[RMDB]
RNA sequence: GGGAACGACUCGAGUAGAGUCGAAAAACUUUUUCAUUACCUCAUCUUCUAUGUGAUCGUAAUGUAAGGUCAUUAGAAACAAUAAAAGAGACAUCAAAUAUUUCGCUUCAAUGUGCUCAAAUUUUGAGACUGACCAUCGGUUCGCCGAUGGUCAGUCAAAAGAAACAACAACAACAAC
Reactivity to 2A3 in 0.01 (KOAc 150mM, MgCl2 10mM, bicine 150mM(pH8.5), 24C), signal-to-noise 2, nucleotides 027 to 126: a000c020u180u070u060u090u100c050a020u050u020a020c000c000u020c000a060u070c080u300u000c050u070a200u100g000u000g000a000u040c000g020u010a140a000u120g100u140a000a000g000g000u000c000a000u000u120a050g180a120a080a000c120a070a000u130a080a090a100a000g060a020g080a040c010a010u070c040a050a090a000u130a110u120u080u210c150g000c040u020u000c100a170a060u140g000u040g080c000u000c020a110a210a160u170u000u000u000g020a010
Conditions: 150 mM KOAc, 10 mM MgCl2 and 150 mM bicine (pH 8.5), 24 C. Structure probing data (2A3) for a 177-nucleotide construct. It was measured as part of the RMDB library OK1LIB. 2A3 is a SHAPE reagent: it acylates the 2'-hydroxyl of flexible nucleotides of all four kinds.